This 177-nucleotide RNA was probed chemically with 2A3 and DMS. The RNA was probed in 150 mM KOAc, 10 mM MgCl2 and 150 mM bicine (pH 8.5) at 24 C. For 2A3, 1,244 sequencing reads were counted.

[RMDB]
RNA sequence: GGGAACGACUCGAGUAGAGUCGAAAAGAGACGUUGUUCGCAACGUCUCGCAAUAUGCGGCGCUCGCGCGCCCCACUGAGAUCGUCGGGAUCCAGACCGACAACACCCAAGAAUUCGUUCUUGGGAAAUAGGUGACAGGAUUCGUCCUGUCACCUAUAAAAGAAACAACAACAACAAC
Reactivity to 2A3 in 0.01 (KOAc 150mM, MgCl2 10mM, bicine 150mM(pH8.5), 24C), signal-to-noise 1, nucleotides 027 to 126: g020a000g000a020c040g020u000u020g030u040u090c190g000c120a010a010c000g000u020c010u020c000g000c000a100a160u150a100u210g110c060g000g030c010g020c030u080c110g000c000g010c030g040c020c000c020c010a070c070u300g040a070g060a220u150c080g010u020c020g010g000g050a050u050c030c000a040g090a090c020c010g090a000c000a030a020c060a070c020c020c010a000a000g000a000a000u120u120c210g020u090u000c030u010u000g000g010g030a050a010
Reactivity to DMS in 0.01 (KOAc 150mM, MgCl2 10mM, bicine 150mM(pH8.5), 24C), signal-to-noise 2, nucleotides 027 to 126: g010a040g000a000c010g020u000u010g000u000u020c230g040c010a020a000c020g020u000c000u010c020g010c130a050a060u010a100u000g000c240g010g000c000g040c010u010c300g000c300g000c010g000c000c000c000c010a030c150u000g000a100g010a070u020c100g000u000c010g050g000g000a020u010c140c070a080g000a060c000c010g010a030c050a140a100c220a120c010c000c000a030a000g000a010a040u000u020c280g000u000u010c020u000u000g010g020g000a020a000